[RMDB]
RNA sequence: GGGAACGACUCGAGUAGAGUCGAAAACCACUCAUUGAGUGGCCACUUACUGAGUAUGAUUUUACUGAUUAUAAGGUACAACUCUUUGAGAAGUACUUUAAAUAUUGGGAUCAGACGUAUCACGCAAGAAAAGCAAACAGUUCGCUGUUUGCUUUUCAAAAGAAACAACAACAACAAC
Reactivity to 2A3 in 0.01 (KOAc 150mM, MgCl2 10mM, bicine 150mM(pH8.5), 24C), signal-to-noise 1, nucleotides 027 to 126: c010c000a010c020u020c020a300u000u260g000a030g000u030g000g060c020c000a050c020u080u170a080c060u040g030a010g060u080a050u080g060a040u000u050u070u190a050c000u000g010a010u000u040a040u010a070a000g030g010u000a020c010a030a020c000u020c000u080u170u300g020a020g000a010a000g000u000a000c000u000u010u050a030a140a060u140a010u040u020g010g000g000a000u030c000a020g010a050c010g040u070a010u200c050a010c090g100c030a090a050
Reactivity to DMS in 0.01 (KOAc 150mM, MgCl2 10mM, bicine 150mM(pH8.5), 24C), signal-to-noise 2, nucleotides 027 to 126: c010c000a020c010u010c010a120u030u000g010a040g000u010g000g010c120c130a130c110u010u030a070c110u010g030a130g010u000a060u000g000a040u000u020u020u010a140c000u000g000a020u010u010a300u000a000a030g000g010u000a000c000a040a300c000u000c010u020u000u050g010a010g020a050a300g000u000a010c000u000u000u000a010a060a120u000a080u000u000g010g000g010a040u000c000a050g000a100c050g020u000a010u020c110a070c120g010c150a100a190